Description
Structure probing data (DMS) for a 177-nucleotide construct. It was measured as part of the RMDB library OK2TRN. The reactions ran in a buffer of 150 mM KOAc, 10 mM MgCl2 and 150 mM bicine (pH 8.5), at 24 C. Reactivities are given for positions 27 through 126.
[RMDB]
RNA sequence: GGGAACGACUCGAGUAGAGUCGAAAAGUAUCAGUUUCCAAGGGUUACCGGCUCGUAUCUGCUGGGUUGGCUUGGGGCAGCGCGCUAAAUUAGGCUUAGCCUUCAAUGAGAUGGUACGAACAGGUGAGCGAAGGAGUACGUUCGCGUACUCCUUCGCAAAAGAAACAACAACAACAAC
Reactivity to DMS in 0.01 (KOAc 150mM, MgCl2 10mM, bicine 150mM(pH8.5), 24C), signal-to-noise 1, nucleotides 027 to 126: g010u000a050u030c140a150g000u000u000u000c010c030a200a240g000g000g000u020u020a050c030c040g000g000c040u000c040g030u000a030u010c050u000g060c050u000g000g030g000u000u000g000g000c040u000u010g040g010g010g010c010a120g000c060g020c140g000c020u000a030a080a210u020u010a050g010g030c020u000u000a090g000c000c000u010u000c140a120a100u000g000a060g000a150u010g010g000u020a050c040g000a060a040c030a070g040g040u030g000a090